Chemical mapping of a 177-nucleotide RNA with DMS and 2A3. It was measured as part of the RMDB library OK2TST.

[RMDB]
RNA sequence: GGGAACGACUCGAGUAGAGUCGAAAAUGGCGAUAUCAUGGCAAUGGGCGCACUUUGUGCUGCUGAUGAAAUGGGCCUGCGCGUCCCGCAGGAUGUUUCGCUGAUCGGUUAUGAUAACGUGCGCAAAACGCACGCGCAGUUUCGACUGCGCGUGCGUAAAAGAAACAACAACAACAAC
Reactivity to DMS in 0.01 (KOAc 150mM, MgCl2 10mM, bicine 150mM(pH8.5), 24C), signal-to-noise 1, nucleotides 027 to 126: u020g000g000c040g040a170u020a020u000c030a020u000g000g010c030a170a070u000g000g020g060c010g030c010a020c030u000u010u010g000u000g020c000u010g020c020u020g010a100u000g030a010a010a030u000g010g020g010c000c020u000g020c000g000c150g000u020c130c170c010g000c000a020g000g000a070u000g020u000u000u000c010g010c150u020g000a060u000c090g000g010u010u000a060u000g030a030u000a030a160c060g040u000g010c040g020c110a070a040a140
Reactivity to 2A3 in 0.01 (KOAc 150mM, MgCl2 10mM, bicine 150mM(pH8.5), 24C), signal-to-noise 1, nucleotides 027 to 126: u100g050g010c020g020a030u000a030u070c020a020u010g030g000c040a070a140u110g140g090g000c000g000c030a010c060u140u110u160g040u040g000c020u050g000c000u060g090a210u090g000a020a000a030u060g030g180g050c010c000u020g010c000g000c040g000u170c000c000c010g000c000a000g000g020a020u040g020u000u020u010c040g000c070u010g060a080u070c110g060g000u110u110a050u080g060a000u020a050a020c050g000u100g110c020g030c010a000a000a000